An RNA of 207 nucleotides, treated with 2A3 and DMS and read out base by base.
The DMS profile rests on 3,521 reads.
DMS adducts were read by reverse transcription with MarathonRT.
Conditions: 150 mM KOAc, 10 mM MgCl2 and 150 mM bicine (pH 8.5), 24 C.
2A3 adducts were read by reverse transcription with SuperScript II with manganese.

[RMDB]
RNA sequence: GGGAACGACUCGAGUAGAGUCGAAAAUCUCCUCUUUUGAGGAGACCUGGUGAGAGCGCUAGGAAGGGCUUUUAACGUUGCAUUGCCCCUAUACACCUUUUAACUGGUGUAUAGUUUGCCUCGUGGGCCAAUUUAAGUCUGCGUAGGAAGCAACGAAAGUAGUGUGUGUGUUCGUAUACAUGCUGCUAAAAGAAACAACAACAACAAC
Reactivity to 2A3 in 0.01 (KOAc 150mM, MgCl2 10mM, bicine 150mM(pH8.5), 24C), signal-to-noise 1, nucleotides 027 to 156: u000c010u000c000c010u000c000u030u160u120u230g000a000g000g000a010g000a000c000c010u000g010g000u000g010a240g030a000g050c050g000c000u010a000g000g030a030a050g010g000g000c000u040u040u010u050a080a050c010g000u000u000g000c000a010u020u050g010c000c000c000c000u000a000u000a000c000a000c000c000u040u040u050u160a100a080c080u020g000g000u010g000u000a000u000a000g000u000u020u090g010c000c010u000c000g000u000g000g000g000c000c020a050a040u050u090u160a040a010g010u000c000u000g000c000g010u010a010g000g000a020a010g020c000a000a000c000g000a030a000
Reactivity to DMS in 0.01 (KOAc 150mM, MgCl2 10mM, bicine 150mM(pH8.5), 24C), signal-to-noise 1, nucleotides 027 to 156: u000c000u000c000c000u010c000u010u010u010u010g040a020g030g000a010g000a020c000c010u000g010g020u000g010a160g000a090g000c050g020c010u020a060g020g020a160a120g030g020g050c040u020u000u000u000a040a170c040g010u000u000g010c010a210u000u000g020c010c030c040c000u000a010u010a010c000a010c000c000u000u000u000u010a050a260c280u000g000g010u000g010u000a000u000a010g000u010u000u000g010c000c010u000c030g030u000g020g170g010c000c020a050a170u010u010u000a080a040g000u000c000u000g000c010g010u010a010g000g000a100a120g010c020a020a080c030g000a070a160